The record gives the reactivity of an RNA of 207 nucleotides to 2A3 and DMS. Values cover nucleotides 27 to 156. For DMS the reverse transcriptase was MarathonRT. It was measured as part of the RMDB library RNAMAK. High DMS reactivity at an A or C suggests that its Watson-Crick edge is free. The DMS profile rests on 7,260 reads. For 2A3 the reverse transcriptase was SuperScript II with manganese. The RNA was probed in 150 mM KOAc, 10 mM MgCl2 and 150 mM bicine (pH 8.5) at 24 C.

[RMDB]
RNA sequence: GGGAACGACUCGAGUAGAGUCGAAAAGCGUGCUUCGGCACGCCACGUGCGUACUACCAUUCAAUAAUUCCGCCAUCGUUGAAACAGUUCCCAAAUAGGAACUGUGGAGAUGGAACUACGGAUAGAAUGGUAUCGCUUAAUUAGGUUUCGACCUAAAACACUCUAUUGCAUUCGUGCAAUAGAGUGUAAAAGAAACAACAACAACAAC
Reactivity to 2A3 in 0.01 (KOAc 150mM, MgCl2 10mM, bicine 150mM(pH8.5), 24C), signal-to-noise 5, nucleotides 027 to 156: g010c000g020u020g000c040u110u120c200g100g000c010a000c000g010c020c010a090c070g150u110g000c000g060u100a140c040u010a000c060c010a010u000u020c020a050a230u100a170a140u170u010c000c000g000c020c000a020u000c000g190u200u020g010a010a010a000c000a010g000u000u010c060c000c030a110a250a110u300a070g000g000a000a000c000u000g000u000g000g000a030g000a000u010g000g010a020a010c060u160a040c080g000g010a000u010a030g000a010a000u000g000g020u000a000u010c000g000c000u020u110a210a160u090u070a040g020g020u030u050u140c190g120a090c010c000u060a070a090a020
Reactivity to DMS in 0.01 (KOAc 150mM, MgCl2 10mM, bicine 150mM(pH8.5), 24C), signal-to-noise 4, nucleotides 027 to 156: g000c010g020u010g000c010u010u000c300g050g000c010a000c010g020c000c010a010c070g030u000g010c010g030u000a090c120u000a030c000c000a020u000u000c010a130a200u030a150a190u000u000c010c000g010c010c090a140u000c010g010u010u020g000a300a270a020c000a010g020u000u000c010c010c020a060a120a160u010a050g000g010a000a010c000u010g000u000g000g000a300g000a010u000g010g020a030a080c000u000a060c000g000g010a040u000a090g010a000a010u010g010g010u000a020u000c040g000c030u000u000a070a120u000u000a050g000g000u000u000u010c220g010a080c010c010u000a030a050a210